[RMDB]
RNA sequence: GGGAACGACUCGAGUAGAGUCGAAAACGACUUGCUGAACUGAAUCAGCGGGAGGUUAAGCGGCUUUCAACGCUGGUCGCAGCGCACAUUGAUAUGAUUUUUAUCCAGCUUUGCGGUGAGAUGCUGACCGAUGAAUUAGCUUCUCCCAUCGUAAUACGACUCCUCGUUAGUUCGCUAACGAGGAGUCAAAAGAAACAACAACAACAAC
Reactivity to 2A3 in 0.01 (KOAc 150mM, MgCl2 10mM, bicine 150mM(pH8.5), 24C), signal-to-noise 1, nucleotides 027 to 156: c030g010a050c000u060u140g000c000u020g000a080a080c020u220g030a130a000u000c000a000g000c010g000g000g000a000g000g000u070u040a120a040g020c090g120g000c120u030u070u000c080a160a060c150g020c060u060g000g000u040c000g000c030a030g090c000g050c010a030c070a110u180u140g000a040u160a140u150g020a150u000u030u110u300u070a100u030c090c160a020g000c050u090u020u050g000c030g020g000u030g080a040g020a000u020g020c050u070g030a110c020c060g080a130u040g070a040a080u070u080a030g040c000u000u040c000u000c000c070c000a040u070c000g040u080a100a000u000a120c020
Structure probing data (2A3) for a 207-nucleotide construct.
It was measured as part of the RMDB library OK3TST.
The reactions ran in a buffer of 150 mM KOAc, 10 mM MgCl2 and 150 mM bicine (pH 8.5), at 24 C.
2A3 adducts were read by reverse transcription with SuperScript II with manganese.